This 177-nucleotide RNA was probed chemically with 2A3. Source: RMDB library RFM100, as collected in RNAgym. Conditions: 150 mM KOAc, 10 mM MgCl2 and 150 mM bicine (pH 8.5), 24 C. Values cover nucleotides 27 to 126. The 2A3 profile rests on 548 reads.
RNA sequence: GGGAACGACUCGAGUAGAGUCGAAAAUUCUCCGAGCUUGCCUACCUAAGUCGACAGAUAUGGGGGUGUAGCCGUGGCAAUAAGGCCACUGGGGUGAGUAAAGAAAUGCACUCGCCUCCCACACUUGCGCCAUAUUGCGCUUCGGCGCAAUAUGGCGAAAAGAAACAACAACAACAAC
Reactivity to 2A3 in 0.01 (KOAc 150mM, MgCl2 10mM, bicine 150mM(pH8.5), 24C), signal-to-noise 1, nucleotides 027 to 126: u000u000c010u000c000c020g000a030g000c000u020u020g000c030c000u160a300c110c000u000a010a000g000u000c000g020a180c170a170g070a030u020a010u050g000g000g000g030g040u000g020u040a000g000c010c020g000u000g000g000c000a000a100u120a220a100g240g000c050c000a010c180u220g000g000g000g000u030g010a000g000u010a000a000a000g010a030a000a010u000g000c010a040c000u000c000g010c020c000u040c000c020c000a010c000a000c020u090u060g020